[RMDB]
RNA sequence: GGGAACGACUCGAGUAGAGUCGAAAAGGUAGGUGGAACGCCAGGGAACAAGGAAAUAGGAGAAGGAACGGUAGAAAAGAGCGAGCCCUCCGAUCCGAUGGGGCCCUGGACCCCUCAGCUCUGGAGAAUGGAACGGUCUUCGGACCGUUCAAAAGAAACAACAACAACAAC
Reactivity to DMS in 0.01 (KOAc 150mM, MgCl2 10mM, bicine 150mM(pH8.5), 24C), signal-to-noise 3, nucleotides 027 to 129: g040g000u050a030g030g000u040g050g010a120a120c010g050c040c020a020g000g020g000a100a030c110a010a020g020g060a050a120a030u030a110g040g010a060g000a100a040g050g020a040a030c070g010g030u040a040g000a130a090a070a100g060a110g020c000g050a060g000c050c040c000u050c040c000g000a080u030c030c030g020a090u080g000g000g050g000c060c000c060u050g050g000a140c100c040c000c000u040c100a100g000c000u030c010u050g000g020a160g000a110a040u000g000
Reactivity to 2A3 in 0.01 (KOAc 150mM, MgCl2 10mM, bicine 150mM(pH8.5), 24C), signal-to-noise 4, nucleotides 027 to 129: g110g010u080a000g010g030u050g020g080a110a020c060g030c050c000a000g040g000g000a050a050c040a040a050g040g050a020a060a020u170a140g000g000a050g030a130a030g060g000a040a020c080g000g010u100a040g080a050a140a050a000g110a000g050c080g010a010g010c000c000c000u030c010c020g010a020u000c030c010g010a050u100g010g000g030g040c050c000c000u040g040g000a040c010c000c000c000u030c020a010g000c000u000c030u120g010g000a040g000a140a060u100g020